[RMDB]
RNA sequence: GGGAACGACUCGAGUAGAGUCGAAAACCCGGCUGACCAGUUGUCUGAUCCUAAUUAUGAUGCCUUGUUGAUUUCUAUGACUAAUCAUAGUUUCAGUGUGCAAAAACACAUUGGCGCUCCAGCAAACAUAUCGCCUAGUUCGCUAGGCGAAAAAGAAACAACAACAACAAC
Reactivity to 2A3 in 0.01 (KOAc 150mM, MgCl2 10mM, bicine 150mM(pH8.5), 24C), signal-to-noise 3, nucleotides 027 to 129: c000c000c000g030g000c070u020g020a040c000c070a110g080u030u010g020u100c040u000g080a070u010c000c000u030a130a040u110u100a100u130g110a040u000g040c020c020u110u060g100u000u130g050a300u010u120u000c030u000a070u000g050a140c040u100a050a150u120c020a010u020a030g030u020u050u010c000a000g000u000g020u000g060c040a000a060a000a090a070c000a010c000a060u010u020g000g000c000g020c050u000c030c000a000g000c030a060a190a050c020a070u170a020
Reactivity to DMS in 0.01 (KOAc 150mM, MgCl2 10mM, bicine 150mM(pH8.5), 24C), signal-to-noise 4, nucleotides 027 to 129: c040c000c000g010g050c080u010g020a160c080c110a090g010u010u020g020u040c050u020g010a120u030c040c040u050a030a100u010u030a110u040g120a000u040g000c060c040u030u050g010u020u070g030a110u000u080u010c010u050a060u040g080a140c300u000a100a110u010c040a010u020a010g000u030u030u000c060a030g050u000g030u050g000c000a020a030a050a100a070c040a020c050a060u010u020g000g000c100g020c050u020c080c090a090g000c130a050a080a070c160a080u070a110